[RMDB]
RNA sequence: GGGAACGACUCGAGUAGAGUCGAAAAGGAACGGGCUCGAAUGCUGAUAUGAUCCAACAUGGACAUAACUUGCUUGUGUAUGUCGCGAGUUAUAAUGAAGUCGAUCAGUUGGCACGGCUUCUCACAGAUCAACGCUGUUGUUCGCAACAGCGUUGAUAAAAGAAACAACAACAACAAC
Reactivity to DMS in 0.01 (KOAc 150mM, MgCl2 10mM, bicine 150mM(pH8.5), 24C), signal-to-noise 2, nucleotides 027 to 126: g050g030a050a020c120g030g000g140c020u000c060g040a070a000u000g000c000u040g010a040u000a090u020g000a030u000c040c080a030a220c130a050u000g000g040a110c220a010u000a090a000c000u000u010g040c000u000u000g000u000g020u050a000u020g080u030c150g010c040g000a030g010u020u000a000u000a090a020u050g000a110a130g050u010c110g000a000u000c030a040g010u000u020g000g090c020a030c030g000g000c020u030u000c020u000c030a110c210a160g010
Reactivity to 2A3 in 0.01 (KOAc 150mM, MgCl2 10mM, bicine 150mM(pH8.5), 24C), signal-to-noise 4, nucleotides 027 to 126: g130g020a070a060c090g010g030g000c090u110c150g060a200a090u060g000c000u030g010a020u120a140u220g020a010u000c020c000a030a030c010a160u140g070g040a040c010a080u030a000a000c010u000u090g010c000u220u140g100u080g070u180a200u230g130u180c070g020c000g010a000g000u050u010a040u040a050a070u130g060a050a070g010u080c040g010a030u000c000a040g030u060u010g010g020c000a010c000g000g040c000u010u030c000u060c000a030c030a050g110

The record gives the reactivity of an RNA of 177 nucleotides to DMS and 2A3. The data come from the RNA Mapping Database (RMDB), library OK1LIB. The 2A3 profile rests on 1,571 reads.